[RMDB]
RNA sequence: GGGAACGACUCGAGUAGAGUCGAAAAUCAUGCUAUCACGAGGUAACUGGGUCUAGAUCAGUUACCUGUGAGCGAAAGUUCACAUUGUGUCAAUGAUCUAGACGUUGACGUAAUCGUGAUAGCAUGCCUACUCGUAUCUAUUCGUAGAUACGAGUAGAAAAGAAACAACAACAACAAC
Reactivity to DMS in 0.01 (KOAc 150mM, MgCl2 10mM, bicine 150mM(pH8.5), 24C), signal-to-noise 8, nucleotides 027 to 126: u020c010a000u000g000c000u000a000u000c000a010c000g000a010g000g010u000a060a040c010u000g010g010g010u000c100u000a060g000a040u000c000a020g010u000u000a010c000c040u000g010u000g000a010g010c000g000a120a090a160g010u000u000c000a000c000a040u000u010g010u000g010u010c100a040a040u000g000a060u010c080u000a010g010a070c010g020u000u000g010a050c080g010u000a080a080u000c000g010u000g000a010u000a000g000c000a000u000g000c280
Reactivity to 2A3 in 0.01 (KOAc 150mM, MgCl2 10mM, bicine 150mM(pH8.5), 24C), signal-to-noise 9, nucleotides 027 to 126: u120c000a000u000g000c000u000a000u000c000a000c000g000a000g040g040u060a050a020c010u020g020g000g060u030c040u030a030g010a120u030c000a020g030u000u010a000c000c000u000g000u000g000a000g000c000g040a100a020a010g000u010u010c000a000c010a020u040u130g030u040g010u080c030a010a030u020g020a080u030c040u080a020g020a080c050g160u020u030g030a040c040g020u060a010a020u000c000g000u000g000a000u000a000g000c000a000u000g000c000